[RMDB]
RNA sequence: GGGAACGACUCGAGUAGAGUCGAAAACACUUGGUUCAUUAGUCUGCGAAGAGCAGAUAAAUAGAACAGAUCUUUGCACAGAUACGGGGCCAAGUAGAUGGAGAAGUGAGUGGUAGCGGUGCAAAUGGCUGGGUAAUAUCUUCGGAUAUUACCCAGCAAAAGAAACAACAACAACAAC
Reactivity to DMS in 0.01 (KOAc 150mM, MgCl2 10mM, bicine 150mM(pH8.5), 24C), signal-to-noise 3, nucleotides 027 to 126: c040a090c090u000u010g020g010u010u010c000a080u040u000a170g000u000c020u000g000c000g000a090a110g000a250g010c040a020g010a010u020a030a020a070u020a110g020a080a070c130a100g010a050u000c020u010u010u020g020c090a080c050a070g000a060u010a100c180g010g000g000g040c010c000a030a040g010u000a020g000a030u000g040g040a030g020a090a060g000u000g000a090g010u000g000g020u020a060g000c080g000g040u000g010c150a000a060a070u050g000
Reactivity to 2A3 in 0.01 (KOAc 150mM, MgCl2 10mM, bicine 150mM(pH8.5), 24C), signal-to-noise 3, nucleotides 027 to 126: c020a030c030u010u130g060g000u000u000c000a000u010u080a060g070u030c010u010g000c010g060a140a080g020a110g060c010a000g000a000u000a000a010a000u090a020g060a050a040c040a010g060a070u020c000u050u040u070g040c050a070c020a030g010a010u040a050c040g020g020g000g040c030c010a020a030g000u050a030g020a040u090g060g010a070g020a110a060g110u100g040a050g050u060g020g040u080a010g030c010g070g020u030g020c000a000a020a130u120g060